[RMDB]
RNA sequence: GGGAACGACUCGAGUAGAGUCGAAAAGAUAUGGAUCCCUCAAGACAUGCUGAAUUCGGAAACGAAUUCCAGCAACAGCUUGUGGGAUCCUAAGUCAAAGAGCAUACAUGUUCGCAUGUAUGCUCAAGUACGUUGUUUAGUUCGCUAAACAACGUACAAAAGAAACAACAACAACAAC
Reactivity to 2A3 in 0.01 (KOAc 150mM, MgCl2 10mM, bicine 150mM(pH8.5), 24C), signal-to-noise 4, nucleotides 027 to 126: g000a000u010a000u040g010g000a000u000c010c040c000u000c000a030a110g050a230c160a300u120g010c000u000g020a010a000u000u000c000g010g020a010a010a010c010g000a000a010u020u010c270c060a000g070c000a030a070c060a040g100c000u000u000g000u000g000g000g000a000u000c000c000u000a000a000g000u010c010a060a130a130g000a000g000c000a000u010a010c010a000u020g040u070u160c300g000c160a000u010g000u020a000u000g000c000u000c000a000a000
Reactivity to DMS in 0.01 (KOAc 150mM, MgCl2 10mM, bicine 150mM(pH8.5), 24C), signal-to-noise 5, nucleotides 027 to 126: g010a020u000a140u010g010g000a010u000c000c000c000u000c000a010a010g010a200c190a160u000g020c000u010g000a030a010u000u000c000g020g000a040a030a100c000g000a020a010u010u000c270c130a010g010c010a060a130c280a130g000c000u000u000g000u000g000g000g000a010u000c000c000u000a000a080g000u010c010a100a130a100g000a010g010c000a000u000a010c010a000u000g010u000u010c240g020c010a010u000g000u000a000u000g010c000u000c000a010a060
Background:
The data come from the RNA Mapping Database (RMDB), library TTRDES. Chemical mapping of a 177-nucleotide RNA with 2A3 and DMS. The reactions ran in a buffer of 150 mM KOAc, 10 mM MgCl2 and 150 mM bicine (pH 8.5), at 24 C. The 2A3 profile rests on 19,835 reads. For 2A3 the reverse transcriptase was SuperScript II with manganese.